Chemical mapping of a 177-nucleotide RNA with 2A3 and DMS.

[RMDB]
RNA sequence: GGGAACGACUCGAGUAGAGUCGAAAACACUUGUUUUUCAGACAUAUUUUAAUCUCCUUUGAUUAGGAAACACGAACCAGAAACUUUACCAUGCAUAAGAAUGUUCACGCACACUUUAGAUUUUCUACGAUUAAAUCCUGUUCGCAGGAUUUAAUCGAAAAGAAACAACAACAACAAC
Reactivity to 2A3 in 0.01 (KOAc 150mM, MgCl2 10mM, bicine 150mM(pH8.5), 24C), signal-to-noise 7, nucleotides 027 to 126: c070a020c060u080u110g060u040u060u030u050u040c030a020g040a040c030a050u170a150u060u100u090u150a100a140u030c040u040c040c000u090u080u120g100a080u110u200a040g070g000a020a110a020c070a000c040g030a050a020c010c010a020g050a050a060a020c010u050u050u060a090c030c000a040u090g030c010a040u060a140a000g050a090a030u120g030u070u050c010a010c040g040c000a010c000a000c030u050u090u110a070g010a180u100u040u000u010c000u000a020
Reactivity to DMS in 0.01 (KOAc 150mM, MgCl2 10mM, bicine 150mM(pH8.5), 24C), signal-to-noise 2, nucleotides 027 to 126: c070a110c110u000u000g010u050u000u000u000u000c040a120g010a090c060a150u000a080u010u000u020u000a070a110u000c060u000c100c060u000u000u000g000a110u010u000a030g000g000a090a060a070c130a050c090g000a050a090c050c050a060g010a060a080a100c040u000u000u000a120c090c040a050u020g000c110a090u010a020a080g010a080a060u000g040u010u000c030a020c050g010c030a020c090a020c030u000u010u020a060g010a130u000u000u000u000c000u010a170
2A3 adducts were read by reverse transcription with SuperScript II with manganese. Conditions: 150 mM KOAc, 10 mM MgCl2 and 150 mM bicine (pH 8.5), 24 C.